[RMDB]
RNA sequence: GGGAACGACUCGAGUAGAGUCGAAAAUAGCUGACGUUCGCGUCAGCUAAAAGCAGCAAAACCUCCUGGCGGUGCGGCGCCGGCCCCGCCGGGAAGGCCGCCAACUCGAUGGGUUCGCCCAUCGAAACAUACUCAGUGUGUUCGCACACUGAGUAUGAAAAGAAACAACAACAACAAC
Reactivity to 2A3 in 0.01 (KOAc 150mM, MgCl2 10mM, bicine 150mM(pH8.5), 24C), signal-to-noise 2, nucleotides 027 to 126: u050a000g000c000u010g010a000c010g020u030u010c240g030c010g140u020c000a000g000c000u000a000a000a000a000g000c040a010g020c020a020a040a080a240c010c020u000c000c010u010g010g000c000g000g020u030g040c060g080g030c070g020c070c000g020g010c020c010c000c020g000c000c000g000g000g000a010a000g000g000c010c010g020c010c000a040a050c050u020c010g010a000u000g000g010g040u050u040c140g060c010c000c000a000u000c000g000a010a000a000
Reactivity to DMS in 0.01 (KOAc 150mM, MgCl2 10mM, bicine 150mM(pH8.5), 24C), signal-to-noise 4, nucleotides 027 to 126: u010a000g010c000u000g000a010c010g020u000u010c260g030c010g040u000c000a000g010c000u000a000a020a090a100g020c100a100g020c080a080a040a110a200c050c020u000c010c010u000g010g020c010g000g000u010g000c060g020g010c030g010c080c060g020g010c020c050c030c020g010c010c000g000g000g000a010a020g000g010c050c080g010c010c120a070a090c160u010c000g000a010u000g010g000g000u000u020c190g010c000c000c000a000u000c000g010a020a080a180
About this RNA: Structure probing data (2A3 and DMS) for a 177-nucleotide construct. The 2A3 profile rests on 7,020 reads. Source: RMDB library M2PK50, as collected in RNAgym. For DMS, 4,338 sequencing reads were counted. Conditions: 150 mM KOAc, 10 mM MgCl2 and 150 mM bicine (pH 8.5), 24 C.